This 177-nucleotide RNA was probed chemically with 2A3. Values cover nucleotides 27 to 126. The data come from the RNA Mapping Database (RMDB), library OK1LIB.
RNA sequence: GGGAACGACUCGAGUAGAGUCGAAAACAAACAAACACGGACUCGAAAUCGCAAAAAGCGAAAGAAAGAAUCGCAGUCGUAAGCGUCGACGAGUCCGAAACAACGCAAAGAAGCGAACAAAACAAAACGCACUUGAACAGUUCGCUGUUCAAGUGCGAAAAGAAACAACAACAACAAC
Reactivity to 2A3 in 0.01 (KOAc 150mM, MgCl2 10mM, bicine 150mM(pH8.5), 24C), signal-to-noise 1, nucleotides 027 to 126: c060a000a150a000c000a030a030a020c080a000c110g000g000a000c000u000c000g000a070a070a070u150c000g000c000a000a300a000a000a000g060c060g080a080a130a000g170a300a120a000g110a030a080u020c000g000c120a000g170u050c050g000u150a050a160g000c000g020u030c080g100a080c000g000a000g000u030c000c000g000a000a000a000c000a000a080c000g040c000a120a000a250g030a200a060g100c090g030a030a070c000a000a120a000a000c030a000a000a000a000